An RNA of 177 nucleotides, treated with DMS and 2A3 and read out base by base.
The data come from the RNA Mapping Database (RMDB), library TTRDEL.
For 2A3 the reverse transcriptase was SuperScript II with manganese.
[RMDB]
RNA sequence: GGGAACGACUCGAGUAGAGUCGAAAAGAUAUGGAUAAUGUAGGGAGAACGUCGGAAACGACCAGUUCAUCGAUCUACCUUAUCCUAAGUCAAAAGCGACAAAAUUCCUUCGGGAAUUUUGUCGCAACUUAGGCAUAUUCUUCGGAAUAUGCCUAAGAAAAGAAACAACAACAACAAC
Reactivity to DMS in 0.01 (KOAc 150mM, MgCl2 10mM, bicine 150mM(pH8.5), 24C), signal-to-noise 2, nucleotides 027 to 126: g000a050u000a300u000g000g000a000u000a000a000u000g010u000a000g000g000g000a070g000a030a030c000g010u000c000g000g010a050a050a230c000g020a000c050c230a130g020u000u010c030a270u000c170g000a100u020c000u000a000c000c040u000u000a000u000c010c000u010a060a090g020u000c030a130a080a140a090g000c000g010a020c000a000a010a010a010u000u000c000c000u010u020c250g030g000g000a010a000u000u000u000u000g000u010c010g020c000a020a020
Reactivity to 2A3 in 0.01 (KOAc 150mM, MgCl2 10mM, bicine 150mM(pH8.5), 24C), signal-to-noise 1, nucleotides 027 to 126: g030a000u090a040u150g000g010a010u000a030a000u020g020u030a000g040g110g000a010g000a000a010c020g000u010c000g030g010a040a050a030c030g000a020c070c080a040g000u020u020c050a150u300c130g030a040u130c010u030a000c000c000u000u010a000u040c000c000u010a070a020g020u030c010a040a000a080a140g000c000g010a000c000a010a020a010a000u000u040c000c000u020u110c260g060g030g030a030a010u020u020u020u020g000u010c000g020c020a000a000